This 177-nucleotide RNA was probed chemically with DMS and 2A3. The reactions ran in a buffer of 150 mM KOAc, 10 mM MgCl2 and 150 mM bicine (pH 8.5), at 24 C. DMS adducts were read by reverse transcription with MarathonRT. The DMS profile rests on 2,950 reads. For 2A3, 1,641 sequencing reads were counted. Reactivities are rounded to 0.1 and cut off at 0 and 3.
[RMDB]
RNA sequence: GGGAACGACUCGAGUAGAGUCGAAAAAAAAUAGUCUUAUUAUCUCGCCACUAUAAAAGUCGAAGUAAACAGACAGAGACAUGUUCGAUACUCCACUUGCACUUCGAAAAAGUAAUUAGGAAUCCUAAAUAAGUGUAACGUUCGCGUUACACUUAUUAAAAGAAACAACAACAACAAC
Reactivity to DMS in 0.01 (KOAc 150mM, MgCl2 10mM, bicine 150mM(pH8.5), 24C), signal-to-noise 3, nucleotides 027 to 126: a050a060a070a060u000a070g000u030c020u020u000a200u010u010a060u000c020u000c030g000c070c060a080c070u000a100u000a070a050a130a110g010u000c010g020a070a060g010u010a030a050a090c240a030g000a050c070a050g010a130g000a060c160a050u010g010u000u010c060g020a080u000a060c040u000c020c030a020c040u000u000g010c120a030c010u000u000c060g010a050a040a030a050a080g000u010a030a080u010u010a040g010g010a050a090u000c010c000u010a060
Reactivity to 2A3 in 0.01 (KOAc 150mM, MgCl2 10mM, bicine 150mM(pH8.5), 24C), signal-to-noise 2, nucleotides 027 to 126: a000a010a000a010u080a060g000u000c030u060u070a140u060u020a030u060c030u000c030g040c050c040a060c040u150a050u050a300a130a060a010g030u020c010g000a040a000g020u090a020a100a030c010a000g110a010c020a040g010a010g000a030c010a080u130g150u150u090c070g010a030u050a040c030u040c040c000a030c010u010u040g000c050a020c050u030u020c000g010a040a030a020a000a010g030u070a060a060u080u050a000g030g000a060a040u050c020c010u070a140